[RMDB]
An RNA of 207 nucleotides, treated with 2A3 and read out base by base. The reactions ran in a buffer of 150 mM KOAc, 10 mM MgCl2 and 150 mM bicine (pH 8.5), at 24 C. Values cover nucleotides 27 to 156.

RNA sequence: GGGAACGACUCGAGUAGAGUCGAAAAGCGGCGAUGACGACAACGACGUCUUAUGGACCACGAUGGAUUGUGCCCCAACCGUGGGUGAUGUUAGAAACACGGCCACAUUCGCGGCUGAGGCGCAUCCCAGCGUGAUCCACCACGCGGCGGUGUGCCAUACAGUGACGCGAUUCGUCGCGUCACUGUAAAAAGAAACAACAACAACAAC
Reactivity to 2A3 in 0.01 (KOAc 150mM, MgCl2 10mM, bicine 150mM(pH8.5), 24C), signal-to-noise 1, nucleotides 027 to 156: g090c070g020g020c060g080a090u130g040a020c050g000a040c060a120a040c070g170a000c020g040u050c010u040u200a150u070g000g000a000c050c000a000c000g000a000u010g000g000a000u040u000g010u020g010c020c020c000c000a000a020c000c000g010u020g000g040g010u000g010a160u030g060u140u100a110g170a080a190a000c150a040c210g050g040c020c000a050c000a050u050u020c020g000c000g000g000c010u000g000a020g000g020c010g020c010a000u010c060c000c000a000g000c000g010u010g050a050u020c020c000a000c030c000a060c020g040c000g060g030c000g090g020u080g050u090g010c020c020a000
Source: RMDB library OK3TST, as collected in RNAgym.